[RMDB]
RNA sequence: GGGAACGACUCGAGUAGAGUCGAAAAGUACUGAAAAACCGUUUUUUAAACGUGAAACAUUCAGGCGAUUGCCAGCCAAAUCCACAUCCUGUAACCGUAAGCUACGAAGCUCAGUGGUGCGUAAGCCCAUUAGUAGGGCCUUCGGGCCCUACUAAUGAAAAGAAACAACAACAACAAC
Reactivity to DMS in 0.01 (KOAc 150mM, MgCl2 10mM, bicine 150mM(pH8.5), 24C), signal-to-noise 3, nucleotides 027 to 126: g020u000a110c020u010g000a040a060a070a140a140c110c000g000u000u000u000u020u010u000a020a030a020c030g000u020g010a100a060a100c180a180u000u000c030a040g000g000c060g020a110u020u000g020c060c020a090g010c060c050a020a070a100u010c030c050a050c090a070u000c030c020u000g000u000a090a050c090c050g010u010a100a100g010c030u010a080c120g000a120a100g020c030u000c060a090g000u010g000g020u000g010c050g020u000a070a100g000c000c040
Reactivity to 2A3 in 0.01 (KOAc 150mM, MgCl2 10mM, bicine 150mM(pH8.5), 24C), signal-to-noise 2, nucleotides 027 to 126: g020u030a130c020u010g020a010a010a010a050a050c010c050g030u010u000u000u000u070u270a080a070a000c010g000u050g130a180a070a060c050a030u060u000c030a010g030g010c010g100a110u080u220g060c000c010a040g050c000c020a070a050a030u020c010c000a020c000a070u040c000c020u040g010u110a050a050c010c010g030u000a050a000g010c020u070a060c070g100a090a000g000c020u040c050a050g040u030g070g010u040g010c010g000u050a060a040g010c000c010
Conditions: 150 mM KOAc, 10 mM MgCl2 and 150 mM bicine (pH 8.5), 24 C. Structure probing data (DMS and 2A3) for a 177-nucleotide construct. DMS (dimethyl sulfate) methylates the pairing face of unpaired adenines and cytosines. For 2A3, 1,630 sequencing reads were counted.